[RMDB]
RNA sequence: GGGAACGACUCGAGUAGAGUCGAAAAGGGGUCAUCUUUUGACGGGUCGAAGAAACGCGAAGAACGUACACUGAAGCCUCCACGGUGUACGGGAGCGUUUCUCGACCCGAUAAGAUGACGGAGGCACCCAAAAUCAUGUAGCUUCGGCUACAUGAAACUAACGAUAAAGUUUCGACUUUAUCGUUAGAAAAGAAACAACAACAACAAC
Reactivity to 2A3 in 0.01 (KOAc 150mM, MgCl2 10mM, bicine 150mM(pH8.5), 24C), signal-to-noise 6, nucleotides 027 to 156: g100g010g060g020u020c010a000u000c000u050u140u130u180g160a170c200g000g000g000u020c010g010a220a090g010a000a170a000c000g020c010g130a240a020g000a000a000c000g000u010a000c010a000c000u040g010a100a010g020c000c000u000c000c000a010c010g000g000u010g000u010a000c020g000g000g000a010g000c000g000u000u010u000c000u000c000g000a000c000c000c000g000a000u000a000a000g010a000u000g000a000c010g000g000a000g000g000c000a050c010c000c010a040a070a000a140u030c000a000u000g000u000a000g010c010u050u040c300g100g000c000u010a010c000a000u000g000a010a000a010
Reactivity to DMS in 0.01 (KOAc 150mM, MgCl2 10mM, bicine 150mM(pH8.5), 24C), signal-to-noise 2, nucleotides 027 to 156: g000g070g030g020u010c000a010u000c000u000u000u020u000g010a200c170g020g010g030u000c000g010a090a090g020a000a010a020c010g030c010g010a100a170g000a150a300c000g040u000a010c010a040c000u000g010a040a100g010c020c000u000c010c020a300c030g020g000u000g010u000a010c010g020g000g010a060g000c010g000u000u000u010c000u000c000g000a010c010c010c000g000a000u000a010a050g010a030u000g010a060c020g000g010a010g100g050c000a100c010c010c010a050a070a090a170u000c000a010u010g010u000a010g030c000u000u010c300g050g000c010u000a010c020a000u000g000a010a070a220
An RNA of 207 nucleotides, treated with 2A3 and DMS and read out base by base. The RNA was probed in 150 mM KOAc, 10 mM MgCl2 and 150 mM bicine (pH 8.5) at 24 C. Values cover nucleotides 27 to 156. As a SHAPE reagent, 2A3 marks flexible, mostly unpaired nucleotides at the ribose 2'-OH.